This 207-nucleotide RNA was probed chemically with 2A3.

RNA sequence: GGGAACGACUCGAGUAGAGUCGAAAACCGCAUGCCCAGGUGGCCGCGAUCUUCAAGGCUACGGCGCGGAUAGGUCCGCGCUCAUCGUUUUCCUCCAACGACGCUAUGGCGUCUUUCCUUCACCCGCAAAAUCGUCUCCCGUUCGCGGGAGACGAAAUCGUUUAAUAACCUUCGGGUUAUUAAACGAAAAAGAAACAACAACAACAAC
Reactivity to 2A3 in 0.01 (KOAc 150mM, MgCl2 10mM, bicine 150mM(pH8.5), 24C), signal-to-noise 2, nucleotides 027 to 156: c000c000g010c120a060u060g010c000c010c020a050g040g060u020g040g000c010c030g000c020g110a150u060c030u210u140c130a070a020g000g000c010u010a010c030g000g000c010g000c020g020g000a010u120a140g180g100u010c010c000g010c010g000c020u030c000a070u050c000g010u020u040u060u000c010c020u050c040c030a030a020c050g030a020c010g010c020u080a050u190g110g020c010g000u000c000u000u040u000c020c020u060u060c030a080c010c020c020g090c110a030a040a040a150u030c000g000u000c000u020c000c020c000g000u030u040c140g000c010g050g000g000a000g000a010c010g000a000a000a010
Notes:
The RNA was probed in 150 mM KOAc, 10 mM MgCl2 and 150 mM bicine (pH 8.5) at 24 C.